[RMDB]
RNA sequence: GGGAACGACUCGAGUAGAGUCGAAAAUUGCUCCCACGCUGGAGCGUGGAAGCCAGAGGCUGAUUUGUGGGGAUACUUCAGGGUAAGCCCCCGUUCGCUGCUCUCCUCCGGCGCGGAGUGCCCGCCGGUCAAUUCGCAAAUUCGUUUGCGAAUUGACAAAAGAAACAACAACAACAAC
Reactivity to 2A3 in 0.01 (KOAc 150mM, MgCl2 10mM, bicine 150mM(pH8.5), 24C), signal-to-noise 3, nucleotides 027 to 126: u030u080g020c000u040c010c020c010a030c000g040c010u070g000g050a040g010c160g010u140g080g040a130a090g060c100c040a070g060a040g160g040c100u120g080a110u090u200u210g190u300g010g020g000g000a020u020a040c000u060u140c140a230g210g020g000u060a140a120g020c000c010c000c010c020g010u010u020c030g000c040u050g010c010u000c010u030c020c000u000c000c010g000g020c000g000c020g030g000a020g000u040g050c000c000c010g090c050c010g040
Reactivity to DMS in 0.01 (KOAc 150mM, MgCl2 10mM, bicine 150mM(pH8.5), 24C), signal-to-noise 4, nucleotides 027 to 126: u010u020g000c020u000c020c000c040a090c010g020c020u000g010g010a070g010c090g040u000g000g010a030a040g030c070c290a090g020a150g000g010c090u000g010a040u010u000u010g020u010g020g010g010g000a100u000a030c000u000u000c260a130g010g010g000u010a030a170g010c020c000c000c000c010g000u000u000c120g010c030u000g000c060u000c030u000c010c040u000c020c000g000g010c010g010c300g000g000a100g020u000g010c020c020c000g000c040c120g000